Record summary: An RNA of 177 nucleotides, treated with DMS and 2A3 and read out base by base. The 2A3 profile rests on 4,760 reads.

RNA sequence: GGGAACGACUCGAGUAGAGUCGAAAAGUUGAAGUGUUCGCACUUCAACAAACGCUCAACUCAUGGAGCGCAAGAGGAAUAGCUACAUAUUCGACAUGAGAAAAAGACUGUAGUUCGCUACAGUCAACAAUGAACACGUGUUCGCACGUGUUCAUUGAAAAGAAACAACAACAACAAC
Reactivity to DMS in 0.01 (KOAc 150mM, MgCl2 10mM, bicine 150mM(pH8.5), 24C), signal-to-noise 3, nucleotides 027 to 126: g000u000u000g010a000a000g030u000g040u000u020c220g020c000a000c000u000u000c000a000a000c000a050a070a150c020g010c000u000c010a200a110c000u000c000a030u000g000g000a020g030c000g020c090a080a100g010a150g000g000a020a010u000a010g000c160u020a100c130a100u000a020u000u000c010g020a300c010a020u000g000a020g030a110a070a160a100a130g000a000c000u000g020u010a000g010u010u000c230g020c010u000a000c000a010g000u000c000a030a050
Reactivity to 2A3 in 0.01 (KOAc 150mM, MgCl2 10mM, bicine 150mM(pH8.5), 24C), signal-to-noise 3, nucleotides 027 to 126: g000u010u000g000a010a000g000u000g010u070u140c190g070c050a000c000u000u000c000a000a020c000a010a020a000c030g000c000u010c000a020a080c030u000c000a010u020g020g000a000g010c060g020c120a100a040g050a060g170g170a020a020u040a020g070c110u240a090c090a220u050a070u000u040c020g040a000c030a010u010g000a010g000a080a020a010a010a000g010a000c000u000g010u010a000g010u000u060c200g030c050u010a000c000a000g000u000c000a000a000
Notes
The RNA was probed in 150 mM KOAc, 10 mM MgCl2 and 150 mM bicine (pH 8.5) at 24 C. DMS (dimethyl sulfate) methylates the pairing face of unpaired adenines and cytosines.